[RMDB]
Record summary:
Chemical mapping of a 177-nucleotide RNA with DMS and 2A3. For 2A3, 1,600 sequencing reads were counted. For DMS, 868 sequencing reads were counted. The RNA was probed in 150 mM KOAc, 10 mM MgCl2 and 150 mM bicine (pH 8.5) at 24 C. DMS adducts were read by reverse transcription with MarathonRT.

RNA sequence: GGGAACGACUCGAGUAGAGUCGAAAAGGAGAGCGCAGCAUCUGGCUCCACACGAUCAUCCAGUACAUUUCACCACAUUGUCUGCAGCUCACCUCGCAGGAAUCACUUCGGUGAGCGAGGGCUGUUCGAGUACUGGAAAGUUCGCUUUCCAGUACUCAAAAGAAACAACAACAACAAC
Reactivity to DMS in 0.01 (KOAc 150mM, MgCl2 10mM, bicine 150mM(pH8.5), 24C), signal-to-noise 1, nucleotides 027 to 126: g000g000a060g010a050g010c070g020c000a060g030c020a100u000c050u010g000g040c030u000c020c090a060c070a120c040g000a020u010c040a090u000c010c040a060g000u010a070c100a120u010u000u010c080a090c040c050a100c160a140u010u010g030u000c070u020g010c000a110g000c010u020c050a200c030c000u000c020g000c050a170g000g040a140a170u000c070a030c010u010u010c090g020g040u000g000a020g010c000g000a010g020g000g020c040u010g000u020u000c130
Reactivity to 2A3 in 0.01 (KOAc 150mM, MgCl2 10mM, bicine 150mM(pH8.5), 24C), signal-to-noise 2, nucleotides 027 to 126: g110g040a080g010a030g030c070g040c090a000g000c030a060u040c040u050g030g000c000u000c020c000a020c010a010c020g020a040u040c040a020u010c020c030a020g040u040a020c040a120u010u000u090c100a120c060c000a020c030a100u050u160g060u040c050u090g010c000a010g000c030u070c040a120c000c000u030c020g060c020a000g100g300a140a100u100c010a010c030u110u060c120g100g010u020g000a000g000c020g000a010g000g000g010c020u000g030u090u080c020